[RMDB]
RNA sequence: GGGAACGACUCGAGUAGAGUCGAAAAAUCUAUAUAGGCCGAAUCUAUGAUAUUGUUGAUAAUACAACGGUUUAAUGCACACAGUAUUAUCUACGAAACUUUGAUAAGUUAGAUCAGUGUACGUAUAUUUAGAUGUUUUCAGCUUAGCUAAUCCUGACCAACGGUAUUGAUUCGUCAAUACCGUUGGAAAAGAAACAACAACAACAAC
Reactivity to DMS in 0.01 (KOAc 150mM, MgCl2 10mM, bicine 150mM(pH8.5), 24C), signal-to-noise 1, nucleotides 027 to 156: a050u000c030u000a100u000a040u010a300g010g080c040c000g010a150a110u000c030u000a070u010g000a110u000a100u000u010g020u000u050g010a020u000a030a010u000a030c040a030a140c060g000g040u020u020u000a110a100u000g030c000a050c030a070c040a300g000u020a010u030u000a000u000c020u030a300c010g000a140a140a120c070u020u000u000g040a110u010a000a160g020u020u000a040g010a040u000c070a050g040u000g030u000a040c050g000u000a080u000a080u010u000u000a040g040a110u000g000u010u010u000u020c030a090g020c030u000u000a150g070c040u000a020a180u000c010c020u000g010a300
Reactivity to 2A3 in 0.01 (KOAc 150mM, MgCl2 10mM, bicine 150mM(pH8.5), 24C), signal-to-noise 3, nucleotides 027 to 156: a020u010c020u010a020u000a030u020a100g070g030c020c000g040a060a000u000c010u040a060u060g070a030u070a110u180u190g010u000u030g000a010u000a010a000u000a010c020a090a040c090g000g030u090u100u160a050a010u130g060c020a020c000a010c020a060g010u000a000u010u010a000u000c030u030a000c010g030a080a090a090c070u100u070u030g110a110u250a140a050g030u040u050a030g000a020u050c030a050g020u000g020u110a070c040g010u030a030u010a030u070u160u060a060g020a080u040g120u030u050u050u080c020a040g000c020u130u200a020g010c020u060a060a050u080c000c000u040g040a020